Source: RMDB libraries RFM100 and RFMREP, as collected in RNAgym. The record gives the reactivity of an RNA of 177 nucleotides to DMS and 2A3. 2A3 adducts were read by reverse transcription with SuperScript II with manganese.

[RMDB]
RNA sequence: GGGAACGACUCGAGUAGAGUCGAAAAGGAACAUGUGGUGAUGAGCAACUUCUUUGUGGACUAGGGUUUCUGAUAACACUACGCAGUGUUUGAUGACCAAACCCUUUGGUUGUCUGAGCUCCUCUAAAUAUAUUACUUCAUUCGUGAAGUAAUAUAUAAAAGAAACAACAACAACAAC
Reactivity to DMS in 0.01 (KOAc 150mM, MgCl2 10mM, bicine 150mM(pH8.5), 24C), signal-to-noise 9, nucleotides 027 to 126: g010g010a070a060c090a070u010g020u010g010g010u010g000a070u010g010a080g000c040a100a080c090u010u000c030u000u010u010g020u010g000g000a120c080u010a040g010g000g010u000u000u010c010u000g000a150u000a010a010c010a010c010u000a140c300g010c200a040g020u000g000u000u000u010g000a150u000g000a160c300c140a050a030a040c020c010c020u010u010u010g010g000u000u000g000u000c050u000g000a200g000c040u000c040c060u000c040u010a040a080
Reactivity to 2A3 in 0.01 (KOAc 150mM, MgCl2 10mM, bicine 150mM(pH8.5), 24C), signal-to-noise 8, nucleotides 027 to 126: g060g010a070a030c040a090u130g020u080g050g070u060g030a090u040g000a040g060c030a060a080c040u110u080c020u100u150u160g110u120g060g040a050c040u040a030g030g000g000u010u040u030c000u010g010a010u010a020a000c010a000c010u180a080c200g100c280a020g000u000g000u010u000u020g010a010u000g010a020c010c040a050a020a030c000c000c000u030u050u050g060g000u020u030g010u020c090u050g040a030g020c030u020c040c000u000c010u030a060a140